[RMDB]
This 177-nucleotide RNA was probed chemically with 2A3 and DMS. The reactions ran in a buffer of 150 mM KOAc, 10 mM MgCl2 and 150 mM bicine (pH 8.5), at 24 C. Values are in units of 0.01, from 0 to 300, in steps of 10. Values cover nucleotides 27 to 126.
RNA sequence: GGGAACGACUCGAGUAGAGUCGAAAAUUGCUCCAGCUUAUUGAUAUUGUCAAGAAUUGAACUGUAACUAUAAUUUGUAAUUGCUUCUAUCUGUUUUAUUGAAGCAGAGGAAUUAUACAAGCAGCCAAAUGAUCCUAUUAUUCGUAAUAGGAUCAUUAAAAGAAACAACAACAACAAC
Reactivity to 2A3 in 0.01 (KOAc 150mM, MgCl2 10mM, bicine 150mM(pH8.5), 24C), signal-to-noise 8, nucleotides 027 to 126: u090u110g040c020u010c020c000a050g010c060u110u150a070u130u130g020a030u050a100u210u230g080u080c060a090a050g090a200a220u120u140g030a100a040c000u010g010u040a040a030c010u000a010u000a020a020u010u010u040g120u100a070a210u110u030g010c000u000u000c010u040a150u060c080u100g300u140u190u150u140a060u050u120g000a000a000g000c000a000g010a010g030g020a000a000u000u000a000u000a010c010a050a190g030c000a010g010c020c020a020
Reactivity to DMS in 0.01 (KOAc 150mM, MgCl2 10mM, bicine 150mM(pH8.5), 24C), signal-to-noise 8, nucleotides 027 to 126: u020u020g020c070u010c010c030a090g010c110u020u020a070u010u010g000a060u020a100u020u020g010u000c040a060a060g010a100a120u020u020g010a110a230c000u000g000u000a070a300c300u010a010u000a000a010u000u000u000g010u030a070a120u030u000g000c000u000u000c000u000a100u020c250u030g000u050u030u030u030a070u010u010g000a010a000g020c000a010g010a190g000g010a010a010u000u000a010u000a010c070a150a260g000c010a010g000c170c060a050